[RMDB]
The data come from the RNA Mapping Database (RMDB), library M2PK50. An RNA of 177 nucleotides, treated with 2A3 and DMS and read out base by base. For DMS, 936 sequencing reads were counted.
RNA sequence: GGGAACGACUCGAGUAGAGUCGAAAAGGCGACAAGUUCGCUUGUCGCCACGGGGUCCAGCCUGGAAAGGGUGGAGGUAUUGGAAUGGUCGGGCCGCCAUUCAACGCGGGACAUUCGUGUCCCGCAACAGGACCUAUCCAUUCGUGGAUAGGUCCUGAAAAGAAACAACAACAACAAC
Reactivity to 2A3 in 0.01 (KOAc 150mM, MgCl2 10mM, bicine 150mM(pH8.5), 24C), signal-to-noise 1, nucleotides 027 to 126: g010g000c000g000a000c000a020a000g020u040u090c080g060c210u020u010g010u000c000g000c010c010a000c000g030g010g000g000u000c000c000a040g060c060c020u030g070g130a210a090a020g020g040g020u020g000g020a030g030g000u140a150u170u300g180g000a000a010u010g000g020u020c020g000g020g000c000c010g020c000c000a000u000u010c040a030a040c140g000c000g020g000g010a000c000a010u040u070c200g070u070g000u040c000c000c010g000c000a000a000
Reactivity to DMS in 0.01 (KOAc 150mM, MgCl2 10mM, bicine 150mM(pH8.5), 24C), signal-to-noise 1, nucleotides 027 to 126: g000g040c030g020a030c000a000a010g030u000u000c210g000c000u000u000g020u000c000g050c000c000a030c170g010g000g010g000u000c020c010a020g050c030c000u000g000g010a140a150a070g000g000g030u000g020g020a010g000g000u000a090u030u000g000g000a050a040u030g000g000u000c020g000g000g000c000c010g000c000c030a060u000u010c000a050a040c230g000c030g000g020g010a020c000a050u000u040c180g010u000g000u000c000c000c000g070c000a000a040